[RMDB]
This 207-nucleotide RNA was probed chemically with DMS and 2A3. For 2A3 the reverse transcriptase was SuperScript II with manganese. For 2A3, 3,639 sequencing reads were counted. DMS adducts were read by reverse transcription with MarathonRT.
RNA sequence: GGGAACGACUCGAGUAGAGUCGAAAAUUUAACGCUGUUUUAUUGGCGCAAAGGUUUACGGAUAAACAACUAAUAAUUAAACCUUUUGUGUGCGAAACGUGGAUGUUUAACGUACUCUUUAAUCGCUUUGGGGAUGUGUCCUUCGGGACACAUCCAAGUACAUUAAAUCGUUCGCGAUUUAAUGUACAAAAGAAACAACAACAACAAC
Reactivity to DMS in 0.01 (KOAc 150mM, MgCl2 10mM, bicine 150mM(pH8.5), 24C), signal-to-noise 1, nucleotides 027 to 156: u000u000u000a080a180c040g010c020u000g000u000u000u000u000a110u000u050g000g010c010g080c060a100a070a080g000g000u020u000u000a070c050g010g040a210u000a040a090a060c050a060a170c040u000a050a130u000a070a110u000u000a080a070a090c010c020u010u000u000u010g030u000g000u000g020c050g000a080a000a070c100g060u020g020g010a100u020g010u000u000u000a010a130c020g000u000a010c020u000c020u000u010u000a060a150u010c020g030c040u000u000u010g020g000g010g020a040u000g020u000g000u010c000c000u000u020c240g050g000g020a050c000a000c000a000u010c000c000a020a120
Reactivity to 2A3 in 0.01 (KOAc 150mM, MgCl2 10mM, bicine 150mM(pH8.5), 24C), signal-to-noise 6, nucleotides 027 to 156: u060u050u040a100a020c040g000c050u040g060u080u070u060u110a110u100u150g060g000c010g000c020a010a020a030g010g010u020u010u030a030c070g030g040a140u170a150a080a040c070a060a040c090u130a070a140u090a160a060u210u060a050a060a000c010c000u030u100u130u160g060u000g010u040g060c050g020a040a050a030c040g020u070g030g080a100u120g040u040u060u100a050a020c040g010u040a040c020u010c040u090u140u080a100a120u080c070g040c120u110u100u140g070g070g000g000a000u010g000u000g000u000c000c000u020u020c140g060g000g020a000c000a000c000a000u010c000c000a000a000